[RMDB]
RNA sequence: GGGAACGACUCGAGUAGAGUCGAAAACGACUCAAUACGUCCCCGUCGUACAGAAUGGUAACAUAUCUCUCCAAAUAUCUGAGCUUGGGUAUACGGGGAAGCCCAACCCCUUGGGAAGAUUGGGUAUAAAAGGAGCGAUCCUUCGGGAUCGCUCCAAGAUAUGCGACUACUUCGGUAGUCGCAUAUCAAAAGAAACAACAACAACAAC
Reactivity to 2A3 in 0.01 (KOAc 150mM, MgCl2 10mM, bicine 150mM(pH8.5), 24C), signal-to-noise 1, nucleotides 027 to 156: c060g090a000c030u010c070a020a020u120a080c070g010u000c040c050c020c000g020u030c010g060u040a020c000a030g060a050a070u100g080g020u150a220a100c060a050u130a220u080c060u020c040u040c010c040a050a090a100u210a110u140c160u050g020a030g080c020u070u110g000g050g000u070a030u020a060c040g000g000g000g000a030a030g000c010c000c000a020a000c060c000c000c040u040u080g040g000g000a050a030g010a090u000u050g000g000g050u100a060u120a160a180a070a070g000g000a000g010c010g000a000u000c000c030u000u120c140g040g000g020a010u000c020g010c000u030c000c000a000a000